Annotation:
Structure probing data (DMS) for a 207-nucleotide construct. Conditions: 150 mM KOAc, 10 mM MgCl2 and 150 mM bicine (pH 8.5), 24 C. DMS adducts were read by reverse transcription with MarathonRT. The data come from the RNA Mapping Database (RMDB), library RNAMAK.

[RMDB]
RNA sequence: GGGAACGACUCGAGUAGAGUCGAAAAGGGGUCAAUCCAAGAGCGUCACCCACAGGCUUGGAUUUAUACAGCUGAAGCCUCCACGGCUGUAUUGUCAGCCUGUGACAAGUCGCUUGGAUUGACGGAGGCACCCAAAAGCUGUGGUUCGCCACAGCAACGUUAUUCUUGUGUUCGCACAAGAAUAACGAAAAGAAACAACAACAACAAC
Reactivity to DMS in 0.01 (KOAc 150mM, MgCl2 10mM, bicine 150mM(pH8.5), 24C), signal-to-noise 1, nucleotides 027 to 156: g000g040g070g010u010c020a030a000u000c020c000a010a030g000a030g030c050g000u000c050a190c150c010c020a060c030a050g000g000c000u000u010g060g020a150u000u000u000a040u000a010c030a010g010c000u000g020a090a120g030c000c010u000c010c020a300c040g000g010c000u000g000u000a030u000u000g010u000c050a100g000c020c010u000g030u000g000a070c060a060a130g020u000c020g000c020u000u010g000g000a080u010u020g000a000c030g020g020a040g020g090c000a130c010c020c000a070a090a120a170g020c000u000g010u000g000g020u000u000c230g010c050c000a020c010a020g010c000a020a050